Source: RMDB library TTRINS, as collected in RNAgym. An RNA of 177 nucleotides, treated with DMS and read out base by base.

[RMDB]
RNA sequence: GGGAACGACUCGAGUAGAGUCGAAAAGAUAUGGACUCAGCAAAUCGCUGCGAUACAGACAACAGCCCUGACAUCGGAAACGAUGUAGGGACAUGUCUGGUCGCAGCGAUUUGCUGAGUCCUAAGUCCUACAUAAAUAGGUUCGCCUAUUUAUGUAGAAAAGAAACAACAACAACAAC
Reactivity to DMS in 0.01 (KOAc 150mM, MgCl2 10mM, bicine 150mM(pH8.5), 24C), signal-to-noise 1, nucleotides 027 to 126: g010a080u020a280u020g020g000a020c030u000c000a000g010c000a020a030a020u000c020g000c010u020g010c000g020a010u000a120c000a020g000a000c010a010a100c300a220g000c010c010c000u010g010a030c020a000u010c020g010g000a120a100a250c010g000a030u000g010u010a050g000g000g020a020c060a090u000g010u000c000u010g000g000u010c010g020c000a010g000c000g000a020u000u000u000g050c010u000g000a000g010u000c000c000u010a010a090g000u000c030